[RMDB]
RNA sequence: GGGAACGACUCGAGUAGAGUCGAAAAUCAUAUGCUUACAUAGUGUGAAAUACCUGUUAGAGAAUGCAUUUAACUAGAGACAUACACCCUCUCACACACGUGCGUACACAGAUGCAUACAAACACAUCCUCUGCUCUCUUGGAUGCAGCUAUCAAUAUCUUGUAAUUCGAUUCGUCGAAUUACAAGAAAAAGAAACAACAACAACAAC
Reactivity to 2A3 in 0.01 (KOAc 150mM, MgCl2 10mM, bicine 150mM(pH8.5), 24C), signal-to-noise 6, nucleotides 027 to 156: u040c010a020u070a010u120g060c030u080u050a080c020a090u150a110g010u020g000u020g080a090a090a010u120a080c020c040u040g040u090u080a050g010a010g040a180a090u100g020c050a060u100u100u090a090a040c060u040a020g020a020g030a060c030a030u180a040c030a100c030c010c000u010c010u010c020a070c010a010c000a010c090g030u030g040c060g020u070a040c070a010c000a050g060a050u070g020c000a020u050a110c050a020a110a000c050a010c000a090u030c010c030u030c010u020g030c000u010c000u010c030u070u060g000g010a000u050g000c010a000g000c030u060a040u160c030a080a030u130a030
Reactivity to DMS in 0.01 (KOAc 150mM, MgCl2 10mM, bicine 150mM(pH8.5), 24C), signal-to-noise 3, nucleotides 027 to 156: u000c050a110u000a030u000g010c050u000u020a110c060a060u010a050g030u010g030u000g030a120a060a140u000a090c050c040u020g030u000u010a060g010a120g010a080a060u000g010c030a130u000u000u010a080a180c050u000a130g010a140g010a100c090a140u000a080c030a080c030c020c010u000c020u000c050a130c030a030c050a040c120g010u010g000c050g030u000a060c050a090c060a110g010a060u010g040c010a060u010a140c070a070a080a110c070a050c030a080u000c020c030u000c020u000g000c000u000c050u000c020u000u010g000g000a080u000g040c010a070g020c040u000a110u000c040a090a050u000a160